[RMDB]
Structure probing data (DMS and 2A3) for a 207-nucleotide construct.
Source: RMDB library OK3TST, as collected in RNAgym.
The DMS profile rests on 5,748 reads.
For 2A3 the reverse transcriptase was SuperScript II with manganese.
The RNA was probed in 150 mM KOAc, 10 mM MgCl2 and 150 mM bicine (pH 8.5) at 24 C.

RNA sequence: GGGAACGACUCGAGUAGAGUCGAAAAGUACUGUAAGGCUGCAGUAAACAAUACAGCAUGGUAUUGGUACAAAAACAGGCACAUAGAUCAAUGCAACAGAAUACAGAACCCAGAAAUAAAGCUGCAUACGUACAGUCAUCUGAUCUUCAACAAAGUCUAAUUCUAAAAUCUUCGGAUUUUAGAAUUAAAAAGAAACAACAACAACAAC
Reactivity to DMS in 0.01 (KOAc 150mM, MgCl2 10mM, bicine 150mM(pH8.5), 24C), signal-to-noise 3, nucleotides 027 to 156: g020u010a030c010u010g040u000a080a040g030g050c040u000g020c020a070g010u000a060a090a110c040a110a060u000a030c010a130g000c090a180u000g000g010u010a040u000u000g010g020u000a160c120a070a030a060a060a110c070a100g010g020c030a060c060a110u000a060g010a070u010c010a070a110u000g010c050a050a170c030a060g000a100a120u010a180c040a080g000a080a130c040c030c030a120g010a120a030a120u000a070a050a160g020c020u000g000c010a040u010a060c080g020u000a040c030a040g000u000c030a060u010c060u000g000a070u000c000u000u000c060a050a110c090a100a060a130g020u020c060
Reactivity to 2A3 in 0.01 (KOAc 150mM, MgCl2 10mM, bicine 150mM(pH8.5), 24C), signal-to-noise 5, nucleotides 027 to 156: g030u020a020c020u010g010u040a050a040g110g020c020u010g000c020a010g000u060a030a170a020c030a020a020u050a040c020a020g110c060a100u080g090g010u010a010u030u040g020g020u100a030c040a040a090a010a050a030c040a030g050g000c020a010c010a080u090a030g050a030u050c020a050a040u050g020c000a030a040c020a060g110a090a030u110a080c040a040g050a030a030c000c020c010a020g140a020a060a020u140a030a070a010g010c010u010g000c010a010u030a090c030g020u020a020c010a010g030u050c010a060u060c040u030g040a040u030c000u160u140c030a050a050c020a040a060a290g140u150c090